Structure probing data (DMS and 2A3) for a 177-nucleotide construct. For 2A3 the reverse transcriptase was SuperScript II with manganese. For DMS, 1,996 sequencing reads were counted. Source: RMDB library TTRDES, as collected in RNAgym. Conditions: 150 mM KOAc, 10 mM MgCl2 and 150 mM bicine (pH 8.5), 24 C.
[RMDB]
RNA sequence: GGGAACGACUCGAGUAGAGUCGAAAAGAUAUGGAGUAUGAUAUGACAUGGCAUUCGAGUCGGAAACGACUUCCUUUGCCAACAGCAUAUCCGCUACUCCUAAGUCAAAUCUCCGUUCGCGGAGAAAGGUGAGAAUAAACUUCGGUUUAUUCUCACCAAAAGAAACAACAACAACAAC
Reactivity to DMS in 0.01 (KOAc 150mM, MgCl2 10mM, bicine 150mM(pH8.5), 24C), signal-to-noise 2, nucleotides 027 to 126: g000a010u000a300u010g000g010a010g000u010a000u010g010a050u000a010u010g030a060c080a300u000g000g000c000a000u000u000c160g000a040g020u000c000g000g000a130a120a180c010g010a000c000u030u000c020c030u010u000u010g010c000c000a020a060c250a120g000c000a010u000a010u000c000c030g000c020u000a010c000u000c000c000u010a020a090g000u010c010a110a120a230u000c000u000c010c020g060u000u000c270g060c020g000g030a020g000a030a030a100
Reactivity to 2A3 in 0.01 (KOAc 150mM, MgCl2 10mM, bicine 150mM(pH8.5), 24C), signal-to-noise 2, nucleotides 027 to 126: g040a020u070a030u200g000g000a000g030u040a030u300g030a000u010a000u020g120a140c090a120u040g000g030c000a000u030u050c040g020a000g020u000c020g010g000a050a050a010c010g000a010c000u300u290c020c020u000u020u020g000c000c000a010a020c060a050g030c000a000u000a000u010c000c000g000c020u020a000c000u030c010c000u000a130a020g010u000c020a110a030a210u020c010u000c010c000g020u060u080c300g030c010g120g050a010g000a110a050a040